[RMDB]
RNA sequence: GGGAACGACUCGAGUAGAGUCGAAAAGCGAUGGGCUGAACGUCAAGAACGGCGUAACCAUGAGGUAGCUGUAGAUGUACUAGGAAGAACCAAUAACGCUAUGCUCUGGGUCAACAUGUUCUCUGGGGACUUUAAGGCGCUUGAGGAACGAAUCGCGGCACUGAUGUUAAUUCGUUAACAUCAGUGCAAAAGAAACAACAACAACAAC
Reactivity to DMS in 0.01 (KOAc 150mM, MgCl2 10mM, bicine 150mM(pH8.5), 24C), signal-to-noise 2, nucleotides 027 to 156: g020c000g050a150u000g000g000g050c040u010g000a050a090c050g020u010c010a090a100g040a100a130c050g040g010c050g050u000a170a200c010c020a080u000g000a110g040g030u000a050g000c010u010g050u000a180g000a110u000g010u010a110c120u020a180g010g000a130a140g020a060a170c030c000a040a160u010a080a100c090g030c060u000a040u000g000c000u000c020u000g040g000g000u000c020a070a060c040a150u000g030u000u000c050u000c080u020g050g000g060g000a050c050u000u000u000a040a050g040g010c030g020c020u000u000g020a100g040g010a090a110c020g010a040a070u000c050g030c050g000
Reactivity to 2A3 in 0.01 (KOAc 150mM, MgCl2 10mM, bicine 150mM(pH8.5), 24C), signal-to-noise 4, nucleotides 027 to 156: g070c030g020a070u080g020g060g020c060u040g060a090a030c030g000u020c050a100a060g090a140a000c100g020g000c040g030u050a050a070c000c010a080u210g020a010g010g000u010a010g010c080u100g050u110a060g020a160u130g050u120a080c040u080a090g010g090a120a070g030a060a030c040c020a060a010u130a110a020c070g000c010u010a010u090g110c000u000c010u030g040g010g020u030c010a030a030c000a120u150g020u070u010c030u000c000u030g040g010g030g000a020c000u040u130u140a080a030g040g000c030g000c080u060u080g020a030g060g000a020a020c030g030a030a010u070c020g010c000g050

Structure probing data (DMS and 2A3) for a 207-nucleotide construct. The RNA was probed in 150 mM KOAc, 10 mM MgCl2 and 150 mM bicine (pH 8.5) at 24 C. Reactivities are rounded to 0.1 and cut off at 0 and 3. For 2A3 the reverse transcriptase was SuperScript II with manganese.